[RMDB]
RNA sequence: GGGAACGACUCGAGUAGAGUCGAAAAAAAUGUGCUAAGGUAAAGAGUUAGAAGAUUAGUGAAGCGCAAUGAAUGAAAUGCAUUCUUUUAUGUGAAAAUACAAAAAGAAUAAAUGUCCUGCAGGUGAUCUUACUUUCUUGUUCGCAAGAAAGUAAGAAAAAGAAACAACAACAACAAC
Reactivity to DMS in 0.01 (KOAc 150mM, MgCl2 10mM, bicine 150mM(pH8.5), 24C), signal-to-noise 2, nucleotides 027 to 126: a000a090a060u010g030u000g000c020u010a060a200g000g000u010a020a030a120g000a120g010u010u010a110g010a160a150g000a140u010u010a060g020u000g000a190a040g010c060g030c040a020a040u010g010a090a050u000g000a050a060a040u000g000c230a040u010u000c000u000u000u000u000a070u030g000u000g000a070a060a050a150u020a030c020a000a020a020a030a020g000a050a000u000a050a220a040u000g010u000c000c000u000g000c050a050g000g010u010g010a050
Reactivity to 2A3 in 0.01 (KOAc 150mM, MgCl2 10mM, bicine 150mM(pH8.5), 24C), signal-to-noise 1, nucleotides 027 to 126: a000a000a000u070g000u010g000c020u070a000a040g050g020u060a110a040a030g070a070g050u120u170a090g020a210a000g010a150u000u120a070g230u000g070a050a000g030c000g050c130a040a050u110g020a020a010u010g010a000a000a150u070g000c050a010u000u000c020u020u020u040u000a250u070g050u000g030a260a290a110a040u170a090c000a000a000a000a000a000g010a020a020u000a010a020a000u000g000u010c000c000u050g070c020a030g110g100u030g000a000